[RMDB]
RNA sequence: GGGAACGACUCGAGUAGAGUCGAAAAGUCUCCUCUCGCAAAUCAAGGCUCAAAACAAAAGUAAAUGCGAAUAACAUCGUAAAAUUUGCUCGUAAGGACGCUCUAGUAGCUGCCUAAUUAGCCUCUUACAGGUUCGAGCGUCUUCGGUUUGACUCCGCAUCCACACAAGGUUCGCCUUGUGUGGAUGAAAAGAAACAACAACAACAAC
Reactivity to 2A3 in 0.01 (KOAc 150mM, MgCl2 10mM, bicine 150mM(pH8.5), 24C), signal-to-noise 3, nucleotides 027 to 156: g040u010c030u020c040c010u020c020u010c040g010c040a040a070a090u120c040a140a070g040g020c040u070c130a080a150a070a100c050a070a150a060a010g060u090a020a080a060u090g020c000g010a040a030u050a120a030c050a040u020c000g020u060a040a030a090a160u030u060u070g020c020u030c060g110u070a060a020g010g000a000c010g020c000u000c010u040a080g040u090a020g050c070u080g030c020c030u050a060a060u090u090a000g020c030c020u030c050u120u220a090c090a060g070g000u040u130c050g020a000g020c010g030u010c010u040u060c000g000g000u010u010u090g010a020c000u000c030c030g000
This 207-nucleotide RNA was probed chemically with 2A3. The data come from the RNA Mapping Database (RMDB), library RSTRND. Reactivities are given for positions 27 through 156. For 2A3, 1,546 sequencing reads were counted. For 2A3 the reverse transcriptase was SuperScript II with manganese.